[RMDB]
RNA sequence: GGGAACGACUCGAGUAGAGUCGAAAAAGACACUGGCAGCGAACCUUGAGUACCUCGACCAGUUCGAAGAGAUUAUCCUGAUGUUCGACAUGGACGAGCCGGGACGUGAGGCUGUAGAGCAAGGUGCCCCCUUGUCACAAUUCGUUGUGACAAGGGGAAAAGAAACAACAACAACAAC
Reactivity to 2A3 in 0.01 (KOAc 150mM, MgCl2 10mM, bicine 150mM(pH8.5), 24C), signal-to-noise 5, nucleotides 027 to 126: a000g100a000c030a000c030u050g100g000c030a030g060c020g040a070a060c010c010u050u080g030a040g050u130a120c000c010u020c020g040a050c030c020a050g000u040u190c030g010a090a000g070a020g040a130u130u150a040u280c010c010u090g050a100u080g090u010u030c040g030a050c080a170u140g050g080a060c020g000a000g060c020c030g050g020g000a040c080g090u090g040a040g080g000c010u040g020u070a050g000a000g030c020a040a020g060g010u070g010c020
Reactivity to DMS in 0.01 (KOAc 150mM, MgCl2 10mM, bicine 150mM(pH8.5), 24C), signal-to-noise 3, nucleotides 027 to 126: a120g020a090c110a030c010u010g020g000c030a110g000c030g020a110a050c030c030u000u020g000a110g000u030a080c180c030u000c020g000a070c080c050a120g010u030u000c030g000a040a080g000a120g020a100u030u030a110u030c070c060u020g000a130u030g000u000u000c040g040a100c130a080u010g010g020a040c000g000a050g030c100c020g000g000g000a070c050g010u010g040a090g010g000c060u030g000u000a080g000a130g000c000a070a050g010g010u000g000c070